[RMDB]
RNA sequence: GGGAACGACUCGAGUAGAGUCGAAAAAAAAUUGAGGGGUUCAGACCUUAGUACGAGAGGACCGGGUCUGACGCACCACUGGUGCAUCGGUUGUACUGUCAAGUGCAUGGCCGAGUAGCUAAGUGCGUCACCACCAUGCAUUCGUGCAUGGUGGUGAAAAAGAAACAACAACAACAAC
Reactivity to DMS in 0.01 (KOAc 150mM, MgCl2 10mM, bicine 150mM(pH8.5), 24C), signal-to-noise 2, nucleotides 027 to 126: a040a050a040a030u010u010g010a130g000g010g000g010u030u000c050a000g000a060c030c010u070u000a040g020u000a110c020g000a230g000a240g000g000a060c260c190g000g000g010u010c000u000g000a020c050g010c000a010c000c010a030c030u010g040g000u000g010c150a170u000c000g000g000u000u010g000u000a010c000u020g000u010c300a090a040g050u000g000c010a060u040g010g000c000c000g000a030g000u030a300g000c010u010a040a060g010u000g030c060g000
Reactivity to 2A3 in 0.01 (KOAc 150mM, MgCl2 10mM, bicine 150mM(pH8.5), 24C), signal-to-noise 2, nucleotides 027 to 126: a000a000a000a000u080u060g010a040g000g030g010g030u090u070c020a000g000a040c000c010u000u090a000g030u010a000c020g020a010g030a110g160g010a030c000c000g020g000g030u010c000u000g000a000c000g000c000a000c000c010a090c020u010g010g010u050g010c150a020u000c000g000g000u040u000g020u040a000c030u010g200u300c090a210a080g000u010g040c000a010u050g120g010c000c020g000a000g000u000a000g000c000u000a070a050g000u000g000c010g030